RNA sequence: GGGAACGACUCGAGUAGAGUCGAAAACGACAUUCACCGAGACUACAAUCAUUGCCACGGCGGAUGCUCGCGGGCUUAUUCAGUCCUCUAGGGCUCAUGCCAUUGUGGCCCUAACUCGUCACACGGACUCGAACGUUUUAUUCGUAAAACGUUCGAGAAAAGAAACAACAACAACAAC
Reactivity to DMS in 0.01 (KOAc 150mM, MgCl2 10mM, bicine 150mM(pH8.5), 24C), signal-to-noise 1, nucleotides 027 to 126: c010g010a070c100a180u000u020c040a100c000c010g020a140g000a110c040u020a130c100a070a070u000c110a150u010u010g030c010c000a110c000g000g040c080g000g000a100u000g000c060u010c020g000c300g000g000g000c020u000u000a030u030u000c160a060g000u010c000c000u000c070u040a110g010g000g000c000u000c040a150u000g040c060c040a190u010u000g000u000g010g020c030c120c040u000a020a090c160u000c070g000u010c010a060c190a080c030g000g000a280
Reactivity to 2A3 in 0.01 (KOAc 150mM, MgCl2 10mM, bicine 150mM(pH8.5), 24C), signal-to-noise 1, nucleotides 027 to 126: c000g060a010c000a100u000u080c030a060c050c020g050a020g000a010c050u060a040c100a080a110u140c030a150u040u260g000c000c010a020c020g020g000c030g010g000a010u130g000c010u000c040g040c060g010g000g000c000u070u040a060u240u270c040a010g010u000c010c010u090c100u130a150g000g000g000c000u050c060a010u090g000c000c000a000u000u110g050u000g000g000c000c000c000u060a040a010c040u050c050g040u030c040a080c000a050c030g060g000a040